[RMDB]
RNA sequence: GGGAACGACUCGAGUAGAGUCGAAAAGAAAGAGGUGAGGAGUUUUUUGAGGACUGUCUAACCUGAGAAUGGUGAAUCAUGAAGGUCAAUCUCAGGUCCGUCAGCCCACGAGAAGCUGCCUCCAGAAGUGUUUGCUCUUUUUCGAAAGAGCAAACACAAAAGAAACAACAACAACAAC
Reactivity to DMS in 0.01 (KOAc 150mM, MgCl2 10mM, bicine 150mM(pH8.5), 24C), signal-to-noise 1, nucleotides 027 to 126: g000a150a170a150g000a120g040g090u050g000a000g000g050a090g000u000u010u010u000u000u010g010a030g000g020a050c000u000g000u030c000u090a140a060c000c000u000g010a030g000a050a050u000g030g000u030g020a110a130u010c190a140u010g140a110a220g020g000u000c000a030a020u000c020u000c020a010g020g010u000c090c300g000u030c030a000g010c070c000c000a080c010g000a030g010a000a010g000c010u000g000c000c000u000c000c050a120g000a200a150
Reactivity to 2A3 in 0.01 (KOAc 150mM, MgCl2 10mM, bicine 150mM(pH8.5), 24C), signal-to-noise 4, nucleotides 027 to 126: g120a030a080a010g090a050g050g060u270g050a010g000g000a000g000u010u000u000u000u000u000g050a080g020g000a040c010u000g000u000c020u050a020a020c000c000u000g000a000g020a020a060u060g070g050u110g100a080a120u190c100a070u230g170a110a090g160g000u020c000a030a030u000c000u000c000a000g000g030u000c000c020g000u010c000a000g010c020c000c000a010c060g010a010g000a000a000g000c000u140g300c010c000u000c000c010a020g020a130a010